Chemical mapping of a 177-nucleotide RNA with 2A3 and DMS.
[RMDB]
RNA sequence: GGGAACGACUCGAGUAGAGUCGAAAAGAUAUGGACAACUGAUGACCCGAAUCUGGGAUCGGAAACGAUCCUCAGAAAUGUGGCAAGGUUGUCCUAAGUCAAACGGUAGGGGUUCGCCCCUACCGAACGUGUAUGCACUGUUCGCAGUGCAUACACGAAAAGAAACAACAACAACAAC
Reactivity to 2A3 in 0.01 (KOAc 150mM, MgCl2 10mM, bicine 150mM(pH8.5), 24C), signal-to-noise 3, nucleotides 027 to 126: g020a010u030a030u070g000g010a000c010a020a000c010u020g010a050u300g140a260c010c060c130g250a030a050u020c000u010g000g010g000a000u000c010g000g000a010a000a020c000g000a000u020c010c020u080c010a000g000a000a050a050u300g160u300g030g000c020a030a030g000g000u030u030g000u000c000c000u000a000a000g010u010c000a120a050a070c020g000g000u010a000g030g060g000g020u100u100c300g210c000c010c010c000u000a000c000c000g000a010a000
Reactivity to DMS in 0.01 (KOAc 150mM, MgCl2 10mM, bicine 150mM(pH8.5), 24C), signal-to-noise 2, nucleotides 027 to 126: g000a040u010a230u020g030g020a040c000a010a010c000u000g010a090u000g000a270c000c000c030g030a050a120u000c000u000g020g000g000a000u000c000g000g000a050a080a100c010g010a000u000c020c000u010c020a000g000a020a070a100u010g010u000g020g040c070a130a210g010g010u000u000g000u010c010c000u000a010a070g000u010c030a120a060a230c030g010g000u000a000g000g000g030g010u000u040c210g000c000c000c000c000u000a000c000c000g000a020a010

For 2A3 the reverse transcriptase was SuperScript II with manganese.